Structure probing data (DMS) for a 177-nucleotide construct. It was measured as part of the RMDB library M2PK90. The DMS profile rests on 921 reads. The RNA was probed in 150 mM KOAc, 10 mM MgCl2 and 150 mM bicine (pH 8.5) at 24 C.
RNA sequence: GGGAACGACUCGAGUAGAGUCGAAAAAGAAAUUGAUGAAGUAGGAGGCUGUUAGCGCUCUAGUGUGUCUUCAGAUAAGAUAUGUCUGGCCUACUUCAUCGGAUACAUAGGACCAACGCUAAAAAAAGAUAAGGACUGUGUUCGCACAGUCCUUAUCAAAAGAAACAACAACAACAAC
Reactivity to DMS in 0.01 (KOAc 150mM, MgCl2 10mM, bicine 150mM(pH8.5), 24C), signal-to-noise 1, nucleotides 027 to 126: a070g000a050a080a020u000u000g000a050u010g020a000a000g000u000a030g010g010a280g020g000c040u010g030u000u010a090g030c070g010c060u000c110u000a000g020u010g000u020g010u000c000u000u000c130a060g000a060u000a080a070g000a040u020a020u010g000u010c010u020g010g000c030c010u000a000c010u000u010c010a000u000c000g010g010a030u030a070c170a100u000a100g000g000a150c020c070a060a040c130g010c050u020a010a000a040a080a020a030a140